[RMDB]
This 177-nucleotide RNA was probed chemically with 2A3 and DMS. 2A3 adducts were read by reverse transcription with SuperScript II with manganese. High DMS reactivity at an A or C suggests that its Watson-Crick edge is free.
RNA sequence: GGGAACGACUCGAGUAGAGUCGAAAAUUGAGAUAAUCAUGUGGUUUUUGUCACUGGUUCUGUUUGUGUGAUGGAUUAUGUUUAUCGAUUUGCAUAUGUUGAACCAGCCUUGCAUCCCAGGGAUGAACCCCUAAACAGGGUUCGCCCUGUUUAGGGGAAAAGAAACAACAACAACAAC
Reactivity to 2A3 in 0.01 (KOAc 150mM, MgCl2 10mM, bicine 150mM(pH8.5), 24C), signal-to-noise 1, nucleotides 027 to 126: u050u030g050a000g020a050u120a130a000u160c070a090u210g040u250g100g140u080u060u000u050u180g140u050c010a010c000u000g000g020u000u000c010u020g160u100u080u000g010u000g030u010g000a000u020g150g000a030u060u090a080u180g300u100u260u110a070u070c060g010a050u000u050u220g000c020a040u020a010u040g110u140u070g030a000a010c000c000a010g000c040c080u020u090g000c000a050u010c020c020c050a030g080g000g010a060u020g030a080a040
Reactivity to DMS in 0.01 (KOAc 150mM, MgCl2 10mM, bicine 150mM(pH8.5), 24C), signal-to-noise 3, nucleotides 027 to 126: u000u000g000a210g010a110u000a050a060u010c030a080u020g010u010g010g010u000u000u010u010u010g000u000c120a220c010u010g000g010u000u000c020u000g020u000u000u010g040u000g020u000g010a000u000g010g010a030u000u010a070u010g020u010u010u010a030u000c010g000a060u000u000u010g040c010a010u000a010u000g020u010u000g000a020a010c010c000a020g020c050c060u000u000g020c100a120u010c030c030c020a120g000g020g010a110u000g000a060a100